[RMDB]
RNA sequence: GGGAACGACUCGAGUAGAGUCGAAAAGAAGAGAGCUGCAAACAUGGAGCGUGCUGCUGGGCCCUGGGGCACCCUCAUGUAGACCCAUCCGCGCGCCUCGGCACGUGACGCUAGAGGCCCCUUGCCCAACGAGAUGCGUAUUCGUACGCAUCUCGUUAAAAGAAACAACAACAACAAC
Reactivity to DMS in 0.01 (KOAc 150mM, MgCl2 10mM, bicine 150mM(pH8.5), 24C), signal-to-noise 1, nucleotides 027 to 126: g020a120a050g000a050g020a100g010c000u000g040c110a130a040a090c120a050u000g020g000a270g020c040g000u000g040c000u000g010c140u000g000g000g000c030c030c080u000g000g000g000g000c090a050c080c130c040u000c070a060u000g000u000a120g010a090c050c020c030a070u020c120c100g020c090g010c060g030c010c020u010c120g000g000c010a080c060g010u000g020a150c180g000c040u000a050g030a200g000g020c000c060c040c060u000u000g000c020c000c030